[RMDB]
RNA sequence: GGGAACGACUCGAGUAGAGUCGAAAACUGAUGCAAGAUCGAUCGUUGCGAUAGCAUUGUUCUCUUGCAGUGAAACGAAUGCGGUCGUCGAAUCGGGGGUGACGGUUGUAUACUCAGGCUCAAACGCUGUCGAUGCUGAUGCCGGUGCAUCCCCGGCCUCCUGCCCUCUAUUCGUAGAGGGCAGGAGAAAAGAAACAACAACAACAAC
Reactivity to 2A3 in 0.01 (KOAc 150mM, MgCl2 10mM, bicine 150mM(pH8.5), 24C), signal-to-noise 2, nucleotides 027 to 156: c020u080g080a140u130g060c130a000a080g030a150u170c080g000a000u000c030g150u060u180g080c010g080a090u130a040g000c000a000u000u040g020u090u060c060u070c060u090u070g000c010a000g030u000g110a070a060a060c030g110a140a040u030g120c000g070g000u000c010g090u010c060g110a110a110u150c040g000g000g000g000g080u000g000a060c000g000g030u060u190g060u180a000u000a140c000u100c080a150g000g080c030u160c130a120a150a000c260g000c130u080g120u280c110g040a100u110g080c030u090g030a080u140g040c030c090g000g030u130g090c000a000u060c000c030c000c000g020g010c000